Chemical mapping of a 177-nucleotide RNA with 2A3 and DMS.
RNA sequence: GGGAACGACUCGAGUAGAGUCGAAAAUCCGCUAACAUAAAAAAAGUUUGACUUCACAAAAGCAGCUGGAAAUGGACAACCACAAUAUGCAUAAAUCUAACUCCUACCAUCAGCGACACACUGCUUGAUUGAUUGUUGUUUUCGAACAACAAUCAAUAAAAGAAACAACAACAACAAC
Reactivity to 2A3 in 0.01 (KOAc 150mM, MgCl2 10mM, bicine 150mM(pH8.5), 24C), signal-to-noise 7, nucleotides 027 to 126: u000c000c000g000c080u140a130a030c050a120u300a070a150a040a020a010a000a020g050u100u060u080g050a080c020u030u020c060a020c010a090a120a030a030g010c010a010g010c020u050g040g050a050a090a090u080g050g010a020c020a080a030c040c030a040c030a090a080u090a060u200g020c030a040u090a060a120a020u050c030u040a030a060c010u020c020c010u020a060c000c000a040u070c020a010g020c010g070a010c020a000c000a010c060u060g000c010u030u050g030
Reactivity to DMS in 0.01 (KOAc 150mM, MgCl2 10mM, bicine 150mM(pH8.5), 24C), signal-to-noise 5, nucleotides 027 to 126: u020c010c010g020c120u030a090a090c120a090u040a000a010a090a080a070a070a100g000u010u000u030g010a070c050u010u010c060a090c080a070a060a070a020g010c030a040g010c090u000g000g000a020a070a050u010g000g000a050c100a040a050c060c040a040c130a060a050u020a060u020g000c040a040u010a060a050a040u020c070u000a040a070c070u000c020c030u000a080c110c030a030u000c020a050g020c050g020a060c110a070c110a070c080u010g000c040u000u000g010
Description:
For 2A3 the reverse transcriptase was SuperScript II with manganese. Reactivities are given for positions 27 through 126.